[RMDB]
RNA sequence: GGGAACGACUCGAGUAGAGUCGAAAAAGCAGGAGUACGCUCCUGCAUGGGUAGACGAAUUGACCCCAACUGAAGUUCAAUUCUAACGUUAAAAGGUGUUUUAUAUGACUGGACGUACGCGUCCAGAUGACGAUUUCAUUCUUCGGAAUGAAAUCAAGACAGGACAUUACUUCGGUAAUGUCCUGUCAAAAGAAACAACAACAACAAC
Reactivity to 2A3 in 0.01 (KOAc 150mM, MgCl2 10mM, bicine 150mM(pH8.5), 24C), signal-to-noise 2, nucleotides 027 to 156: a000g000c010a000g010g020a000g000u030a050c240g050c080u000c000c010u000g010c000a000u020g030g000g010u110a150g110a280c140g000a040a000u020u040g030a050c000c020c010c030a180a000c160u250g050a050a000g020u080u000c000a000a000u020u010c040u110a090a050c080g050u110u130a020a040a040a060g100g020u050g030u030u060u080u070a190u040a080u200g150a080c000u000g010g000a000c000g020u110a040c160g010c020g120u000c000c010a000g000a000u040g020a000c060g000a000u000u000u000c000a020u000u000c010u040u060c100g100g010a000a000u000g010a000a010a000u030c000a010a000

Annotation: The data come from the RNA Mapping Database (RMDB), library M2RFPK. Structure probing data (2A3) for a 207-nucleotide construct. The 2A3 profile rests on 1,159 reads.